Source information:
This 177-nucleotide RNA was probed chemically with DMS. Values cover nucleotides 27 to 126. The DMS profile rests on 2,613 reads. It was measured as part of the RMDB library TTRINS. Conditions: 150 mM KOAc, 10 mM MgCl2 and 150 mM bicine (pH 8.5), 24 C.
RNA sequence: GGGAACGACUCGAGUAGAGUCGAAAAGAUAUGGAGCCAUUAUCGCAGGGACGAAUUGGAGAAGCUGGUUUCGGAAACGAAACCAGCUUCUCCAACUAUCCCUGAACUACGAUAAGGCUCCUAAGUCCGUUUCAAAUAAGUUCGCUUAUUUGAAACGAAAAGAAACAACAACAACAAC
Reactivity to DMS in 0.01 (KOAc 150mM, MgCl2 10mM, bicine 150mM(pH8.5), 24C), signal-to-noise 3, nucleotides 027 to 126: g010a140u020a300u010g000g010a000g010c000c010a120u000u010a010u000c000g020c000a010g000g010g010a020c110g020a020a120u000u000g000g010a030g020a020a010g010c000u000g000g010u000u000u000c000g020g000a100a100a230c010g000a000a000a000c010c000a000g020c000u010u000c000u000c000c000a000a000c060u000a300u000c000c000c010u010g010a050a070c180u000a300c020g010a030u000a000a010g000g010c000u000c000c010u000a010a060g000u000c030